Conditions: 150 mM KOAc, 10 mM MgCl2 and 150 mM bicine (pH 8.5), 24 C.
This 207-nucleotide RNA was probed chemically with DMS and 2A3.
For 2A3, 1,273 sequencing reads were counted.
The data come from the RNA Mapping Database (RMDB), library OK3TST.
RNA sequence: GGGAACGACUCGAGUAGAGUCGAAAAAGAGUGACGAUCCGCGCCCACCGGUGGAGUUUGCAAAGCAAGCAGCCAAGGCUUUGACGAACGGUGAGGUGCCUACGGACAAGUUGCUGAUGAGUAAGCAAUUGGCGGCAAACUACAAGGUGAGGAUGCCAAUGGUCGGUAUUUUCGAAUACCGACCAUUAAAAGAAACAACAACAACAAC
Reactivity to DMS in 0.01 (KOAc 150mM, MgCl2 10mM, bicine 150mM(pH8.5), 24C), signal-to-noise 1, nucleotides 027 to 156: a060g000a110g040u000g050a120c090g000a060u000c050c010g000c050g020c000c000c000a070c030c000g000g050u000g070g020a180g020u010u000u010g010c060a050a000a070g020c000a030a120g050c040a190g080c090c030a060a140g000g010c020u000u000u000g000a200c040g000a040a070c040g000g000u000g000a100g000g000u000g040c040c000u000a050c130g000g000a010c040a070a180g010u000u010g020c010u020g010a170u000g000a140g030u020a060a070g040c040a040a110u000u000g000g020c000g010g010c030a040a050a110c050u010a110c060a070a030g000g000u000g020a090g020g000a110u000g000c010c070
Reactivity to 2A3 in 0.01 (KOAc 150mM, MgCl2 10mM, bicine 150mM(pH8.5), 24C), signal-to-noise 2, nucleotides 027 to 156: a000g040a000g010u030g000a040c050g030a170u000c040c020g000c000g000c010c010c000a000c010c000g000g100u130g090g110a160g020u070u120u070g030c000a010a010a010g020c010a040a070g000c040a000g010c050c000a010a000g130g010c020u010u020u020g080a140c030g040a130a000c000g050g000u040g030a180g010g010u020g020c010c000u080a040c030g000g050a000c030a060a080g050u070u030g020c000u010g010a130u050g000a020g070u080a090a000g020c030a090a080u040u030g060g010c000g020g000c050a040a020a020c010u070a010c020a080a070g030g070u120g060a040g060g000a030u040g030c010c000